Source information
The data come from the RNA Mapping Database (RMDB), library OK2TRN. An RNA of 177 nucleotides, treated with DMS and 2A3 and read out base by base. The reactions ran in a buffer of 150 mM KOAc, 10 mM MgCl2 and 150 mM bicine (pH 8.5), at 24 C. For DMS, 6,047 sequencing reads were counted.
RNA sequence: GGGAACGACUCGAGUAGAGUCGAAAACAGUUAGAUUUACACAUAGGUUUAAUGCUGUAUGCUUGUGCGAUUCAUACAACGUCAAAAAAGGCUUUUAGACCAGAAGGUGAAUUAACUAGCUACACGCGCUAUUACCAAAGUUCGCUUUGGUAAUAGCAAAAGAAACAACAACAACAAC
Reactivity to DMS in 0.01 (KOAc 150mM, MgCl2 10mM, bicine 150mM(pH8.5), 24C), signal-to-noise 6, nucleotides 027 to 126: c090a040g000u010u000a050g020a080u000u010u010a050c020a060c070a120u010a170g000g010u000u000u000a010a020u000g010c030u020g010u000a050u000g010c140u010u000g020u010g010c120g010a110u010u010c140a090u000a060c120a050a080c120g010u000c040a000a040a050a090a130a200g000g000c040u000u000u000u000a060g010a030c010c030a070g010a120a130g000g010u000g000a020a020u000u000a040a030c010u010a060g000c070u000a070c130a070c180g000c170
Reactivity to 2A3 in 0.01 (KOAc 150mM, MgCl2 10mM, bicine 150mM(pH8.5), 24C), signal-to-noise 6, nucleotides 027 to 126: c030a000g000u020u030a080g020a170u040u040u130a020c090a010c030a060u140a100g000g030u010u030u050a050a030u070g000c020u050g070u130a040u090g050c060u060u040g030u070g070c060g210a240u090u120c040a020u100a190c050a080a030c050g040u050c030a020a060a030a040a050a000g060g000c020u090u120u040u070a010g010a030c000c010a030g040a130a010g050g010u010g010a020a000u030u010a020a020c020u000a020g000c020u070a050c060a020c120g110c030